[RMDB]
RNA sequence: GGGAACGACUCGAGUAGAGUCGAAAAGAAGAGAAAGGAGACACAUGGACAGUCUCCAGAGGUUCCUAAGGCCUCGAUCGCGCCUGCCGGGAAUCAUGGACUCCCGGUUGUCCAUGAAAGAAGAAGAGCGUAUGCAUACCUUCGGGUAUGCAUACGCAAAAGAAACAACAACAACAAC
Reactivity to DMS in 0.01 (KOAc 150mM, MgCl2 10mM, bicine 150mM(pH8.5), 24C), signal-to-noise 1, nucleotides 027 to 126: g000a070a010g030a060g080a090a080a120g030g000a000g040a000c000a150c170a000u020g000g000a000c000a050g090u000c000u000c020c020a080g090a020g060g000u000u020c000c180u150a080a160g040g050c030c010u000c050g000a030u060c130g020c190g000c020c010u050g030c000c000g100g000g030a000a030u020c040a070u000g090g020a090c030u000c000c000c020g000g000u010u000g010u020c010c000a000u020g010a040a090a050g000a180a030g020a030a050g030a150
Reactivity to 2A3 in 0.01 (KOAc 150mM, MgCl2 10mM, bicine 150mM(pH8.5), 24C), signal-to-noise 2, nucleotides 027 to 126: g020a050a050g050a000g060a070a090a060g000g000a060g050a000c040a000c000a140u030g020g000a000c000a020g010u000c000u010c000c000a000g000a000g010g000u020u300c070c040u110a100a060g070g000c010c010u000c010g030a060u040c030g040c070g000c040c020u030g010c000c000g010g020g000a040a020u040c070a060u110g060g030a010c020u050c000c000c000g010g010u030u040g000u000c000c000a000u000g100a110a070a060g150a080a000g040a030a030g020a020

This 177-nucleotide RNA was probed chemically with DMS and 2A3.
The 2A3 profile rests on 1,202 reads.
Values are in units of 0.01, from 0 to 300, in steps of 10.
It was measured as part of the RMDB library OK1LIB.
The DMS profile rests on 1,074 reads.
The reactions ran in a buffer of 150 mM KOAc, 10 mM MgCl2 and 150 mM bicine (pH 8.5), at 24 C.